[RMDB]
Source: RMDB library OK1LIB, as collected in RNAgym. The record gives the reactivity of an RNA of 177 nucleotides to 2A3 and DMS. For DMS the reverse transcriptase was MarathonRT.
RNA sequence: GGGAACGACUCGAGUAGAGUCGAAAAGUGCCAGUGGCAGAGCAGAGCUGAGCUGCUCCAGUGGUAGUGGUGGUGGCGAAGCCAGUGUCGUCGCCGGAGCUUAUAACGAGCGUAGUUCUUGCGCAGAACGUCAUCGCCGUUUCGACGGCGAUGACGUAAAAGAAACAACAACAACAAC
Reactivity to 2A3 in 0.01 (KOAc 150mM, MgCl2 10mM, bicine 150mM(pH8.5), 24C), signal-to-noise 1, nucleotides 027 to 126: g210u210g010c000c000a050g050u080g040g020c060a040g010a010g040c000a020g000a000g110c010u070g030a000g040c000u000g000c000u000c000c000a060g140u110g080g060u090a050g100u000g030g010u090g000g000u000g010g010c020g000a000a000g000c100c000a010g030u120g020u120c020g000u000c030g020c000c000g000g000a000g000c000u140u000a010u070a200a070c040g000a080g030c030g020u030a000g080u000u050c020u010u030g000c010g000c000a000g000a070
Reactivity to DMS in 0.01 (KOAc 150mM, MgCl2 10mM, bicine 150mM(pH8.5), 24C), signal-to-noise 1, nucleotides 027 to 126: g070u000g010c000c010a080g050u000g010g000c300a190g000a050g050c050a170g000a190g000c090u000g000a250g000c090u000g000c000u000c040c080a190g020u000g090g000u000a120g050u040g010g070u000g070g000u000g000g020c000g000a140a130g000c070c080a130g040u000g080u040c090g000u000c120g010c020c000g000g000a110g020c130u020u000a130u010a000a120c300g000a080g020c000g040u000a000g010u000u110c000u000u000g000c000g080c060a180g120a050